[RMDB]
RNA sequence: GGGAACGACUCGAGUAGAGUCGAAAACAAAGUUGGUCAUGAAGAGCAACAUGUACUUUCUAAACCUUCAGAACAUGAUAAAGAGACUAGAAUUGAUUCUGAGUCUUCAAGAACUGAUUCAGACAGCGUAGCAGAGAUAUUUCGAUAUCUCUGCUACAAAAGAAACAACAACAACAAC
Reactivity to DMS in 0.01 (KOAc 150mM, MgCl2 10mM, bicine 150mM(pH8.5), 24C), signal-to-noise 8, nucleotides 027 to 126: c090a080a080a070g010u000u010g010g000u000c030a090u010g020a050a080g010a120g000c100a060a100c080a100u010g000u010a060c100u010u000u010c040u010a070a080a120c120c040u010u010c020a040g000a070a120c080a050u020g020a070u030a030a100a120g000a050g010a020c030u010a020g010a030a080u030u030g010a130u010u010c000u000g000a030g020u010c000u010u010c080a090a090g010a070a150c070u000g000a060u010u010c090a070g010a100c170a070g010c220
Reactivity to 2A3 in 0.01 (KOAc 150mM, MgCl2 10mM, bicine 150mM(pH8.5), 24C), signal-to-noise 9, nucleotides 027 to 126: c040a000a130a020g030u040u030g030g060u030c030a040u090g110a110a140g040a040g120c040a030a080c000a030u060g040u060a060c020u030u080u020c030u070a090a120a140c020c000u070u080c050a020g050a140a050c030a080u170g020a050u200a140a170a040g080a000g020a030c040u050a030g050a060a070u130u210g100a170u250u000c000u040g080a010g010u000c000u060u070c080a070a030g020a080a040c040u040g020a050u080u080c010a020g070a160c040a030g040c030